The record gives the reactivity of an RNA of 207 nucleotides to 2A3 and DMS. For 2A3, 1,359 sequencing reads were counted. Reactivities are rounded to 0.1 and cut off at 0 and 3.
RNA sequence: GGGAACGACUCGAGUAGAGUCGAAAAAGAUUCUCAGCGUCACCGGUGACCACAGGCAAGACGGAGAAACCUCGAUUGUCACUUUCGACUUGGACGAGAUGGCGGAUAACCCCGAUAUUCUGGAGAUACUGACGAAAGACGCCAUUCAGUCGGGGAGGAAAUUUGUCCUUUUCGAAGGACAAAUUUCAAAAGAAACAACAACAACAAC
Reactivity to 2A3 in 0.01 (KOAc 150mM, MgCl2 10mM, bicine 150mM(pH8.5), 24C), signal-to-noise 2, nucleotides 027 to 156: a000g050a070u090u020c030u030c020a070g020c010g040u040c010a040c090c050g000g040u060g100a060c020c030a040c060a070g010g000c040a050a060g050a060c030g020g030a070g020a060a100a040c020c070u100c050g090a160u040u080g020u020c030a020c130u020u160u110c040g000a060c050u060u110g110g010a020c020g010a020g020a110u040g000g000c000g010g050a080u090a220a150c000c000c000c000g030a050u040a080u190u130c050u060g040g010a040g000a060u110a100c070u110g080a060c080g010a050a080a010g010a000c040g000c000c010a020u050u080c000a020g030u030c030g000g000g000g000a050g070
Reactivity to DMS in 0.01 (KOAc 150mM, MgCl2 10mM, bicine 150mM(pH8.5), 24C), signal-to-noise 1, nucleotides 027 to 156: a120g020a100u000u000c010u000c050a080g040c060g000u000c040a030c000c000g020g000u000g000a090c070c100a160c120a120g030g030c030a070a100g010a230c050g040g010a130g000a100a050a100c060c010u000c040g000a120u000u010g010u000c000a140c080u000u000u000c010g040a090c040u000u000g010g020a110c140g000a190g010a080u000g000g000c040g000g000a160u000a070a140c060c000c030c010g010a070u000a020u000u060c080u000g030g000a100g010a200u020a120c010u000g020a080c100g010a080a090a180g000a150c000g010c040c000a070u000u000c050a250g050u000c000g010g000g010g000a110g010